[RMDB]
RNA sequence: GGGAACGACUCGAGUAGAGUCGAAAAGAUAUGGAUACCUCCCAGUGGACGACGAAGUCGGAAACGACAGAGUCUUGGGAGGGUAUCCUAAGUCAAAUCUGGUAGUGGCUUCGGCCACUACCAGAAAUCAUCAAAGAUACUUCGGUAUCUUUGAUGAAAAAGAAACAACAACAACAAC
Reactivity to 2A3 in 0.01 (KOAc 150mM, MgCl2 10mM, bicine 150mM(pH8.5), 24C), signal-to-noise 2, nucleotides 027 to 126: g000a010u080a030u190g000g000a000u000a020c010c000u030c030c010c010a150g210u300g200g140a100c140g000a030c010g040a080a000g020u020c020g000g000a050a050a020c000g000a010c000a000g080a010g010u010c030u060u020g000g040g010a030g100g000g010u000a000u000c000c000u000a040a000g020u020c020a000a020a240u050c010u010g020g000u020a010g010u000g030g040c030u140u090c300g040g000c020c010a000c010u000a000c000c000a000g000a010a000a010
Reactivity to DMS in 0.01 (KOAc 150mM, MgCl2 10mM, bicine 150mM(pH8.5), 24C), signal-to-noise 3, nucleotides 027 to 126: g020a030u010a300u010g000g010a000u000a020c000c010u000c000c000c000a070g030u030g010g010a080c140g020a070c050g000a290a220g000u000c000g010g000a030a040a170c000g020a020c000a010g000a300g000u000c000u000u010g000g000g000a010g020g000g010u000a000u000c000c010u000a030a080g010u000c020a050a120a120u000c000u000g000g000u000a000g010u000g010g000c000u000u020c190g030g000c000c000a010c010u000a000c000c000a000g000a000a040a080